The record gives the reactivity of an RNA of 177 nucleotides to 2A3 and DMS. Values cover nucleotides 27 to 126.

[RMDB]
RNA sequence: GGGAACGACUCGAGUAGAGUCGAAAAUGCGCUAGGUACUGAUCGUACCUACGAUCGAUCCAUGGCAUACCAUGACUAGUACUAGCAUGAUGUCAUCAUGAUAUGUCCAUGUGUACAGGUACAGUGAAUGGGUACUUCAGUUCGCUGAAGUACCCAUAAAAGAAACAACAACAACAAC
Reactivity to 2A3 in 0.01 (KOAc 150mM, MgCl2 10mM, bicine 150mM(pH8.5), 24C), signal-to-noise 2, nucleotides 027 to 126: u170g010c000g010c060u010a000g050g070u020a010c010u120g090a130u130c060g040u000a110c030c000u010a000c010g020a020u050c040g030a060u000c010c000a000u020g010g020c000a010u020a040c000c010a010u000g010a030c080u110a060g070u170a030c010u060a040g260c120a250u250g020a140u210g100u030c020a040u010c010a000u040g010a010u000a010u020g070u000c000c000a010u000g030u010g010u030a070c050a100g000g070u040a060c050a040g010u000g150a130
Reactivity to DMS in 0.01 (KOAc 150mM, MgCl2 10mM, bicine 150mM(pH8.5), 24C), signal-to-noise 4, nucleotides 027 to 126: u010g000c040g000c170u000a040g040g020u000a000c010u030g020a100u020c180g000u000a100c090c030u010a050c020g000a040u000c070g010a150u000c140c010a020u000g000g000c020a020u000a030c030c000a010u010g000a020c220u020a150g040u000a030c060u010a170g040c220a160u000g020a130u000g020u000c040a210u010c000a010u000g000a030u000a010u010g010u000c010c020a000u000g000u010g010u010a080c180a080g010g010u000a000c100a100g020u010g010a160